[RMDB]
RNA sequence: GGGAACGACUCGAGUAGAGUCGAAAACUUAAUUCAAACCUACCAGAUAGCUGAUUUAUGAAAGUGAAAAUGCUGGCAUGUAUAGAUAUUGGGAAGUCUUGGGAUCUGGAUUUUAUCACUGACCAUCCAUGGCGUUUUAAUUCGUUAAAACGCCAUGAAAAGAAACAACAACAACAAC
Reactivity to 2A3 in 0.01 (KOAc 150mM, MgCl2 10mM, bicine 150mM(pH8.5), 24C), signal-to-noise 4, nucleotides 027 to 126: c000u080u060a010a100u220u110c060a040a150a110c000c010u040a040c000c010a050g010a180u040a030g060c020u010g110a180u120u100u190a080u190g090a180a050a020g060u040g010a080a060a040a010u180g000c020u020g010g000c000a100u070g080u060a060u080a120g100a030u010a050u150u130g080g000g010a050a070g040u020c010u060u060g010g020g030a080u000c000u010g030g020a030u030u030u000u170a080u140c010a010c050u010g030a030c020c010a000u020c000
Reactivity to DMS in 0.01 (KOAc 150mM, MgCl2 10mM, bicine 150mM(pH8.5), 24C), signal-to-noise 3, nucleotides 027 to 126: c030u010u010a080a060u010u010c070a090a090a070c060c040u000a080c090c030a040g010a090u010a070g030c000u030g000a180u040u000u030a070u040g060a050a080a070g010u020g010a050a060a080a080u010g010c010u010g000g000c040a070u000g010u010a040u000a050g000a070u020a050u010u000g000g000g020a070a050g000u010c020u010u010g010g000g010a040u000c060u010g030g010a050u010u010u020u040a080u020c050a100c080u000g000a100c080c060a100u030c120
The record gives the reactivity of an RNA of 177 nucleotides to 2A3 and DMS. The 2A3 profile rests on 1,522 reads. Reactivities are given for positions 27 through 126.